[RMDB]
RNA sequence: GGGAACGACUCGAGUAGAGUCGAAAACGUUAAUGAGUUUGUAAUCUCGGAGGAUGGAAGAUUGGAAGUGAAACUUAAUGGUGAAAUUUUGGCAAAUACUGUUGUGCCAGAGAGUCCUGCUGCGAACUGCAUUAGUCAUAUUCGUAUGACUAAUGCAAAAAGAAACAACAACAACAAC
Reactivity to DMS in 0.01 (KOAc 150mM, MgCl2 10mM, bicine 150mM(pH8.5), 24C), signal-to-noise 9, nucleotides 027 to 126: c060g010u010u010a080a120u010g010a100g010u000u000u000g010u010a100a080u000c040u000c040g010g020a090g010g010a080u010g000g010a080a040g010a090u000u000g010g000a060a040g020u000g000a100a090a110c100u000u010a050a090u000g010g010u000g000a050a070a120u000u000u010u000g010g000c030a050a070a090u010a090c180u000g010u000u000g020u000g010c020c020a020g000a080g000a110g000u000c030c020u000g020c060u000g000c060g010a070a090c200
Reactivity to 2A3 in 0.01 (KOAc 150mM, MgCl2 10mM, bicine 150mM(pH8.5), 24C), signal-to-noise 4, nucleotides 027 to 126: c020g020u030u060a140a050u170g040a060g080u060u110u090g110u090a050a060u030c020u000c020g000g020a030g050g000a010u100g020g030a030a020g020a050u050u120g010g020a040a000g040u020g060a060a040a000c010u050u070a090a020u130g020g020u050g030a090a070a100u090u100u070u020g010g000c020a020a060a070u100a120c070u060g050u220u040g040u040g000c000c000a000g000a000g010a000g030u020c020c020u020g000c030u040g010c020g030a060a020c070

The record gives the reactivity of an RNA of 177 nucleotides to DMS and 2A3. The DMS profile rests on 16,854 reads. Reactivities are given for positions 27 through 126.